[RMDB]
RNA sequence: GGGAACGACUCGAGUAGAGUCGAAAAAUACAGUACGAAAGUACAAAGAAGCAAUCAAACCGAGCAGUGAAAUGAUGGCUUCAGUCCAAAAUGGGCAUACACUGCAGACGGAGCCAAAGGCAAAUAAGACCUGUAUACCGUUCGCGGUAUACAGGUCAAAAGAAACAACAACAACAAC
Reactivity to DMS in 0.01 (KOAc 150mM, MgCl2 10mM, bicine 150mM(pH8.5), 24C), signal-to-noise 1, nucleotides 027 to 126: a170u000a050c040a280g060u020a000c020g000a120a080a140g010u000a020c060a040a080a150g000a020a030g000c000a050a010u010c060a060a080a080c030c050g000a120g000c010a000g010u000g010a100a060a050u020g030a090u000g000g000c050u000u000c020a060g000u020c050c120a060a010a040a070u020g040g020g010c020a050u030a210c010a000c000u000g020c070a130g020a190c020g000g000a110g000c080c060a030a100a090g030g000c080a010a070a030u000a050a010
Reactivity to 2A3 in 0.01 (KOAc 150mM, MgCl2 10mM, bicine 150mM(pH8.5), 24C), signal-to-noise 1, nucleotides 027 to 126: a030u110a020c040a050g000u000a000c050g030a040a020a020g020u000a020c020a000a110a030g050a060a000g040c020a050a020u030c020a160a000a030c020c020g010a030g050c040a010g030u040g120a200a080a030u080g070a050u030g010g000c000u080u050c050a020g040u010c020c030a000a120a000a300u160g020g000g020c000a010u010a050c050a050c000u020g030c040a000g070a050c020g000g020a010g060c040c020a050a150a070g070g030c030a040a060a000u030a160a040